[RMDB]
RNA sequence: GGGAACGACUCGAGUAGAGUCGAAAAGCCGUAGUCGUAGUCGACGACGUCGGCGACGACGACAGUGACGUUGUCGGGGCCGCCGCCGCGCAGCGCCAGUUCAAUGAGGCGGUGAGCGCUCUCGGCAAUGUCAGCCUAUUUUCGAAUAGGCUGACAUAAAAGAAACAACAACAACAAC
Reactivity to DMS in 0.01 (KOAc 150mM, MgCl2 10mM, bicine 150mM(pH8.5), 24C), signal-to-noise 4, nucleotides 027 to 126: g040c010c000g020u010a050g000u000c020g010u000a010g050u000c000g010a050c000g040a210c180g000u000c010g000g000c010g000a010c010g000a000c010g000a050c300a080g000u000g000a090c060g020u000u000g020u010c000g010g000g000g010c300c000g000c020c010g000c000c010g010c020g000c030a080g000c300g020c110c120a070g000u030u030c090a100a170u020g000a040g000g010c000g000g010u000g000a160g000c020g020c050u000c000u000c000g010g000c010a020
Reactivity to 2A3 in 0.01 (KOAc 150mM, MgCl2 10mM, bicine 150mM(pH8.5), 24C), signal-to-noise 4, nucleotides 027 to 126: g030c010c000g010u030a010g000u000c000g000u000a020g020u020c010g010a010c020g020a070c170g040u020c010g000g000c000g010a010c000g000a000c000g000a020c020a020g050u060g070a060c080g020u010u010g000u010c000g010g000g000g010c030c010g000c010c000g000c000c000g020c010g010c040a080g040c030g030c090c060a060g040u200u200c050a110a160u140g030a070g170g000c000g000g000u000g040a090g000c040g010c000u000c020u030c020g000g000c000a000